[RMDB]
The record gives the reactivity of an RNA of 207 nucleotides to 2A3.
Values cover nucleotides 27 to 156.
The reactions ran in a buffer of 150 mM KOAc, 10 mM MgCl2 and 150 mM bicine (pH 8.5), at 24 C.
RNA sequence: GGGAACGACUCGAGUAGAGUCGAAAAUCUAUCUCCAUCUGGUCCGUUCGGGCCCUCUUCGCCGGGGGAGCCCCCUCUCCAUCCUUAUCUUUCUUUCCGAGAAUUCCUUUGAUGUUUCCCAGCCAGGGAUUUUCGUCCUCAAGUUUCUUGAUUUUCUCAAUUACAAAGUGUUCGCACUUUGUAAUUGAAAAGAAACAACAACAACAAC
Reactivity to 2A3 in 0.01 (KOAc 150mM, MgCl2 10mM, bicine 150mM(pH8.5), 24C), signal-to-noise 1, nucleotides 027 to 156: u080c020u050a100u040c010u010c050c010a100u070c080u110g020g010u020c020c020g030u110u160c120g010g020g050c050c020c000u030c010u130u180c050g070c070c020g000g010g000g000g000a020g000c010c000c000c020c000u010c000u020c020c010a070u030c000c020u100u100a130u110c020u040u120u000c010u080u090u000c040c010g010a000g010a100a010u070u030c020c000u040u100u150g060a040u030g070u000u130u110c000c000c030a010g050c070c030a000g000g000g000a000u040u000u010u020c000g000u020c000c020u060c030a030a040g040u040u050u000c010u070u150g130a300u120u040u300u020c060u020